Source: RMDB library OK3TST, as collected in RNAgym. The record gives the reactivity of an RNA of 207 nucleotides to 2A3. The reactions ran in a buffer of 150 mM KOAc, 10 mM MgCl2 and 150 mM bicine (pH 8.5), at 24 C.
[RMDB]
RNA sequence: GGGAACGACUCGAGUAGAGUCGAAAACAGUAUUCUCUCUGGAUGCUCUGUGCCAGGUGGACCCCUUGCACAUGUGGCUUGCACACUGACCCAUUGCCUGGAAACCGUGUCCCGCUGGUCUUACGCACACAGCUGCACCAAACAGCCACUUUGUGUAUGCACUAAAUCGUUUCGACGAUUUAGUGCAAAAAGAAACAACAACAACAAC
Reactivity to 2A3 in 0.01 (KOAc 150mM, MgCl2 10mM, bicine 150mM(pH8.5), 24C), signal-to-noise 1, nucleotides 027 to 156: c060a010g030u050a110u080u040c060u000c020u000c070u050g050g090a040u070g030c030u030c020u040g050u060g030c000c000a000g000g020u070g050g070a060c000c060c040c000u020u110g050c020a000c050a060u120g060u160g080g000c020u040u150g080c010a010c000a020c090u050g140a090c000c050c000a090u060u230g040c050c060u000g020g020a070a040a060c050c030g000u050g060u060c000c010c040g020c050u030g000g040u000c000u050u140a090c140g020c000a040c000a020c000a040g000c000u040g020c020a060c030c010a000a090a080c070a010g060c000c040a020c000u020u120u020g010u000g000u020a080
Reactivities are given for positions 27 through 156.